Chemical mapping of a 177-nucleotide RNA with 2A3 and DMS. The RNA was probed in 150 mM KOAc, 10 mM MgCl2 and 150 mM bicine (pH 8.5) at 24 C.

[RMDB]
RNA sequence: GGGAACGACUCGAGUAGAGUCGAAAAAAGCUCGCGCCUCAGAAUCUUGCCGACAUUGCUUUUCGGCAGGGAUUCGCGGAACUCCACCUCGCGCGGGCGCUUGUAAUUGGUGAGGCGUUCCGCACAACAUUAAUAUCCGGUUCGCCGGAUAUUAAUGAAAAGAAACAACAACAACAAC
Reactivity to 2A3 in 0.01 (KOAc 150mM, MgCl2 10mM, bicine 150mM(pH8.5), 24C), signal-to-noise 2, nucleotides 027 to 126: a000a000g010c010u010c010g000c010g000c000c040u170c070a030g020a030a030u020c000u000u020g020c000c000g040a040c050a160u160u300g070c080u150u070u040u030c000g020g000c000a040g070g000g000a060u080u020c090g000c010g020g000a010a010c000u020c030c010a030c010c030u090c040g000c000g000c000g010g000g000c010g010c060u160u260g070u190a210a260u230u250g030g020u160g060a050g030g050c020g010u010u010c000c000g000c020a040c000a070a000
Reactivity to DMS in 0.01 (KOAc 150mM, MgCl2 10mM, bicine 150mM(pH8.5), 24C), signal-to-noise 2, nucleotides 027 to 126: a120a110g000c010u000c010g020c020g020c010c300u000c150a110g000a050a010u000c000u000u010g000c000c010g000a030c300a090u010u010g000c240u000u000u000u000c000g000g000c010a000g000g020g020a050u010u000c030g010c020g010g000a020a020c020u000c050c160a080c020c010u000c080g020c010g030c010g020g000g010c000g000c100u010u010g000u000a120a070u010u010g010g030u010g000a070g030g010c160g000u000u000c000c000g060c050a090c170a070a130